[RMDB]
RNA sequence: GGGAACGACUCGAGUAGAGUCGAAAAAUUGUUAAGUCUUCAGAUGUUGUAGACAGCAAUGAAAAUUUAACAUGGCCACUUGUUUUAGAAUGCACUAGGGCAUCCACUUCUGCCGUUAAGUUGCAAACCAUAUUUAAGGCUUCGGCCUUAAAUAUGGAAAAGAAACAACAACAACAAC
Reactivity to DMS in 0.01 (KOAc 150mM, MgCl2 10mM, bicine 150mM(pH8.5), 24C), signal-to-noise 2, nucleotides 027 to 126: a050u020u010g000u010u000a020a020g010u000c020u000u010c010a010g000a250u010g010u000u010g010u010a210g010a170c040a010g000c020a030a080u000g000a010a010a040a030u000u010u000a010a000c000a020u000g000g010c010c020a060c250u000u000g000u000u010u010u020a090g010a100a130u000g020c030a020c050u000a070g000g000g020c000a030u010c110c080a090c180u000u010c120u000g010c020c030g000u000u000a040a050g020u000u000g010c030a060a070a180
Reactivity to 2A3 in 0.01 (KOAc 150mM, MgCl2 10mM, bicine 150mM(pH8.5), 24C), signal-to-noise 2, nucleotides 027 to 126: a000u000u000g000u000u000a040a000g020u000c010u000u000c000a050g070a300u060g040u010u010g070u040a110g110a300c010a000g000c010a020a010u000g000a020a000a040a000u030u020u010a020a000c000a020u020g060g070c030c000a030c060u050u040g060u000u130u000u030a090g020a120a050u060g020c010a010c000u010a010g010g000g060c000a030u100c030c010a100c090u140u100c010u050g030c000c000g040u040u010a070a010g030u140u040g000c000a030a030a000